[RMDB]
RNA sequence: GGGAACGACUCGAGUAGAGUCGAAAAACCAUCGAUCCGAAUGAGGUGACCUACAUUGAUUACGUGGAGGCGGGAAAUAAGCUUGCCCGCGAGCUGAGAAACGAGGGAUGUGACCUCAUCAUUGCCAACUCCUCCCAGUAUUCGUACUGGGAGGAGUAAAAGAAACAACAACAACAAC
Reactivity to 2A3 in 0.01 (KOAc 150mM, MgCl2 10mM, bicine 150mM(pH8.5), 24C), signal-to-noise 2, nucleotides 027 to 126: a000c030c010a080u090c040g070a080u050c080c060g070a090a100u080g000a010g040g000u030g040a040c000c010u090a080c040a050u000u090g110a090u100u080a070c080g000u060g010g060a050g080g000c020g020g000g040a000a050a050u180a090a050g020c090u060u130g080c000c000c030g010c010g000a010g000c040u050g040a020g060a160a100a050c110g000a030g030g040g020a030u070g050u060g080a010c000c020u010c000a010u010c000a040u000u130g150c050c000a010
Reactivity to DMS in 0.01 (KOAc 150mM, MgCl2 10mM, bicine 150mM(pH8.5), 24C), signal-to-noise 3, nucleotides 027 to 126: a120c030c010a110u000c140g020a050u010c080c100g020a160a040u000g000a060g000g010u000g020a090c050c060u000a100c070a100u000u000g010a160u000u000a070c110g030u010g000g030a140g000g020c020g010g030g000a090a020a060u000a100a100g020c230u020u010g000c000c020c030g000c010g010a100g010c070u000g000a120g000a090a060a060c080g030a140g010g000g000a060u000g020u000g010a060c010c000u000c000a010u000c070a070u010u000g000c160c090a050
Source: RMDB library OK2TST, as collected in RNAgym. Structure probing data (2A3 and DMS) for a 177-nucleotide construct. Reactivities are given for positions 27 through 126. Conditions: 150 mM KOAc, 10 mM MgCl2 and 150 mM bicine (pH 8.5), 24 C. For DMS the reverse transcriptase was MarathonRT.